[RMDB]
RNA sequence: GGGAACGACUCGAGUAGAGUCGAAAAAAGGUGCCAUCAUAUCGGUUAAGAACUCUUAACUCUGAUGGCUUUCGAGUUAUGUGGUGCAUUGAAGCUCUCCCUUCAAAUGGACGUACAGUUCCGUGAAUAUAGUAUGGCUUUUCGAAGCCAUACUAUAAAAAGAAACAACAACAACAAC
Reactivity to DMS in 0.01 (KOAc 150mM, MgCl2 10mM, bicine 150mM(pH8.5), 24C), signal-to-noise 7, nucleotides 027 to 126: a070a080g010g010u000g010c010c000a010u010c010a040u010a130u010c260g010g010u000u000a010a010g010a230a140c300u010c010u000u000a000a010c000u000c090u000g010a010u000g010g000c010u000u000u000c030g000a100g020u010u000a050u000g010u000g010g020u000g000c020a040u000u000g000a050a060g000c090u000c100u010c080c100c000u000u000c030a030a030a060u000g010g000a030c020g020u000a050c080a140g000u000u000c010c020g010u010g010a070a130
Reactivity to 2A3 in 0.01 (KOAc 150mM, MgCl2 10mM, bicine 150mM(pH8.5), 24C), signal-to-noise 3, nucleotides 027 to 126: a000a000g110g010u040g010c080c010a010u000c000a000u060a060u190c060g000g000u010u010a020a030g060a260a240c060u010c000u300u000a000a000c000u000c030u120g010a000u010g000g000c000u010u040u010c000g000a000g020u080u040a070u140g050u040g060g010u040g020c030a030u040u060g050a020a020g010c020u030c010u040c080c000c010u010u000c010a050a080a070u060g020g040a020c040g010u120a060c040a040g020u060u000c020c010g010u070g090a080a040